RNA sequence: GGGAACGACUCGAGUAGAGUCGAAAAGAAAUAGGAUCGACAAGGGUGUAAAGAUCGCUCUUUUACUCGGCAUGAUACCACCGUUAUCGGGUCAACAGAGUAGUUGCAAAUGACAACAAUGCUCAGGAAGGGGUAGCACCGUUCGCGGUGCUACCAACCUGUGGUGUUCCUUCGGGAACACCACAGGAAAAGAAACAACAACAACAAC
Reactivity to 2A3 in 0.01 (KOAc 150mM, MgCl2 10mM, bicine 150mM(pH8.5), 24C), signal-to-noise 1, nucleotides 027 to 156: g040a010a090a000u180a010g100g010a010u050c010g040a060c110a120a170g020g070g020u020g070u100a110a170a080g000a110u060c000g040c020u000c010u040u090u050u110a120c040u010c000g000g000c020a010u110g020a000u010a010c000c000a030c010c010g060u060u090a000u030c070g000g000g030u000c020a000a000c040a030g000a000g000u000a010g000u010u000g060c060a050a240a210u270g090a130c000a000a000c010a110a190u060g020c000u010c090a000g050g070a030a060g000g060g000g000u000a000g000c010a000c000c000g000u040u050c210g010c010g070g000u000g000c000u000a000c000c000a000a000

Notes
Structure probing data (2A3) for a 207-nucleotide construct. It was measured as part of the RMDB library M2RFPK. The 2A3 profile rests on 694 reads. The RNA was probed in 150 mM KOAc, 10 mM MgCl2 and 150 mM bicine (pH 8.5) at 24 C.